[RMDB]
RNA sequence: GGGAACGACUCGAGUAGAGUCGAAAACUGGUUUUGUUGUGAGUACACCAAAGCGUAGCAGAUGAAUACUACUUCUCAGUACUUCACCAUUGCUGUUGUAAAGCCCUUGGAUUAAUGGUGCGAGUCAACUCCGUAGGCACUAUAGACAAGUUAAUGCUCUGAACUAGUUAUUCGUAACUAGUUCAGAAAAAGAAACAACAACAACAAC
Reactivity to DMS in 0.01 (KOAc 150mM, MgCl2 10mM, bicine 150mM(pH8.5), 24C), signal-to-noise 3, nucleotides 027 to 156: c020u000g030g030u000u000u000u000g020u010u000g000u000g000a120g030u000a100c040a120c100c040a080a100a110g030c180g000u000a080g030c020a130g030a120u020g010a070a080u010a060c030u000a050c050u010u010c070u000c060a130g030u010a040c090u000u000c020a040c030c030a190u000u010g020c040u010g000u020u000g020u010a060a060a130g000c050c030c030u000u000g020g010a140u000u000a060a050u000g010g010u010g000c040g000a130g030u010c020a040a090c040u000c030c020g030u000a110g030g000c000a030c020u010a080u000a110g000a100c020a030a090g000u010u010a060a070u000g010c110
Reactivity to 2A3 in 0.01 (KOAc 150mM, MgCl2 10mM, bicine 150mM(pH8.5), 24C), signal-to-noise 1, nucleotides 027 to 156: c030u030g000g070u000u020u050u040g010u030u050g020u020g020a060g030u050a060c060a000c070c050a020a040a030g030c020g060u050a030g060c060a010g020a160u070g060a090a100u060a080c050u020a030c000u120u050c080u040c020a010g010u010a050c030u020u110c020a020c030c000a050u010u120g000c000u030g030u130u050g070u080a100a050a050g070c010c000c000u000u050g060g000a080u060u220a080a050u100g000g000u010g040c060g000a040g090u070c010a020a030c040u080c100c040g020u040a050g000g050c020a000c010u040a070u050a100g040a050c040a100a000g060u090u070a140a040u120g030c060
This 207-nucleotide RNA was probed chemically with DMS and 2A3. DMS adducts were read by reverse transcription with MarathonRT. For DMS, 6,479 sequencing reads were counted. It was measured as part of the RMDB library OK3TST.